[RMDB]
RNA sequence: GGGAACGACUCGAGUAGAGUCGAAAAGAUUUAAACAGAUGGAGAUACACAAAUGUUUGAAUCCCAGUAACAAAAAUCCUGGUAUCUCGGGUAUACAGUAGUGCAGAUACUGUAUUCUUAAUGCUCCUUAGGUUUUCCAUCUUCGGAUGGAAAACAAUCUAUGCUGUCUCUUCGGAGACAGCAUAGAAAAAGAAACAACAACAACAAC
Reactivity to 2A3 in 0.01 (KOAc 150mM, MgCl2 10mM, bicine 150mM(pH8.5), 24C), signal-to-noise 1, nucleotides 027 to 156: g000a000u000u040u000a000a000a000c000a010g060a010u080g020g000a010g030a020u030a040c010a000c010a010a150a060u010g010u020u000u010g000a000a000u020c010c030c000a070g100u060a100a200c160a190a130a020a010a010u050c000c000u000g000g090u030a000u000c010u020c040g000g000g000u020a000u000a000c000a000g040u030a010g010u080g300c100a040g020a300u020a010c010u000g000u000a000u050u000c000u030u170a220a100u070g080c040u110c100c050u020u090a030g030g080u030u000u000u000c000c000a000u000c010u010u070c210g090g010a000u000g000g000a000a000a000a000c000a000a020